Chemical mapping of a 177-nucleotide RNA with DMS. The data come from the RNA Mapping Database (RMDB), library TTRINS. For DMS the reverse transcriptase was MarathonRT. The reactions ran in a buffer of 150 mM KOAc, 10 mM MgCl2 and 150 mM bicine (pH 8.5), at 24 C.
[RMDB]
RNA sequence: GGGAACGACUCGAGUAGAGUCGAAAAGAUAUGGACAAUGGGGACACGGCGUGGGAGUACGGUAAUUCCGUCGGAAACGACGGUGCCAGUACGAAGAACACGCCGUGUCCCCCGCUUGUCCUAAGUCGAAUACCACCAAGUUCGCUUGGUGGUAUUCAAAAGAAACAACAACAACAAC
Reactivity to DMS in 0.01 (KOAc 150mM, MgCl2 10mM, bicine 150mM(pH8.5), 24C), signal-to-noise 2, nucleotides 027 to 126: g030a100u010a300u010g000g010a000c000a230a000u010g000g000g010g000a020c010a010c000g020g030c020g010u000g000g010g000a100g050u010a000c000g020g040u000a040a250u000u010c020c000g020u010c000g020g000a150a130a240c000g000a020c000g000g000u000g010c000c000a170g060u000a020c000g010a120a180g000a110a250c020a000c010g000c030c000g010u010g020u000c000c000c000c010c000g000c010u000u000g020u000c000c000u000a040a100g000u010c120